[RMDB]
RNA sequence: GGGAACGACUCGAGUAGAGUCGAAAAAUUGGAAUGUGUCGGAUUGUCAAAGCAAUCAAACAAGAAAGUUUCAAAAUAUUCUUUAGGGAUGAAACAACGUCUUGCAAUAGCUAGAGCAAUUCUUACUCAUUAUAUAAUCAUUCGUGAUUAUAUAAUGAAAAGAAACAACAACAACAAC
Reactivity to 2A3 in 0.01 (KOAc 150mM, MgCl2 10mM, bicine 150mM(pH8.5), 24C), signal-to-noise 9, nucleotides 027 to 126: a000u070u060g060g040a070a090u110g050u020g040u100c040g020g010a010u010u020g040u080c090a120a040a040g020c010a000a050u080c020a040a060a100c010a010a010g060a070a050a010g020u000u010u020c050a080a080a070a070u190a140u120u080c070u110u220u170a160g070g040g050a060u060g020a050a020a010c020a030a040c070g080u010c000u010u010g010c030a070a180u050a170g010c010u040a010g010a010g080c010a020a060u020u010c000u000u030a040c010u000
Reactivity to DMS in 0.01 (KOAc 150mM, MgCl2 10mM, bicine 150mM(pH8.5), 24C), signal-to-noise 4, nucleotides 027 to 126: a100u010u000g020g000a080a040u020g000u000g000u010c180g010g040a040u000u000g020u000c080a130a140a080g030c010a110a080u060c200a080a140a110c030a010a030g010a050a090a120g000u000u000u010c000a030a080a070a130u030a060u050u000c040u000u020u070a070g010g020g020a050u010g010a030a020a020c040a060a080c300g010u010c000u000u010g000c160a080a100u020a080g020c000u000a080g020a290g020c020a000a010u010u000c000u010u000a070c090u020

The record gives the reactivity of an RNA of 177 nucleotides to 2A3 and DMS.
The DMS profile rests on 4,219 reads.
Source: RMDB library OK1LIB, as collected in RNAgym.
Conditions: 150 mM KOAc, 10 mM MgCl2 and 150 mM bicine (pH 8.5), 24 C.